[RMDB]
RNA sequence: GGGAACGACUCGAGUAGAGUCGAAAACUGCCGCCGGGACGCAGUGAUCCUCGCAGGGUCGCACGGUCGCCUCGGGUCGGCCUCGUGUCGGCUCGACCUGCGAGGGGAGCGAGUGGCGAGCCCGAGCAAAACUUUCUCGCCUUCGGGCGAGAAAGAAGCGUAUGAUAAGGUUCGCCUUAUCAUACGCAAAAGAAACAACAACAACAAC
Reactivity to 2A3 in 0.01 (KOAc 150mM, MgCl2 10mM, bicine 150mM(pH8.5), 24C), signal-to-noise 2, nucleotides 027 to 156: c030u100g100c050c050g020c010c000g000g040g010a020c010g000c010a090g110u000g020a010u020c000c010u000c000g000c000a000g030g000g080u140c020g010c080a080c110g110g030u070c030g000c020c030u040c000g000g020g000u020c000g000g000c000c010u090c100g220u300g050u060c000g000g000c010u000c030g060a070c000c000u000g000c000g000a000g000g000g000g000a000g000c010g030a100g090u110g050g020c010g020a030g000c000c000c000g000a040g000c000a000a060a010a020c000u010u000u000c000u000c000g000c000c020u040u050c110g120g010g000c000g000a000g010a000a000a000g000a010a030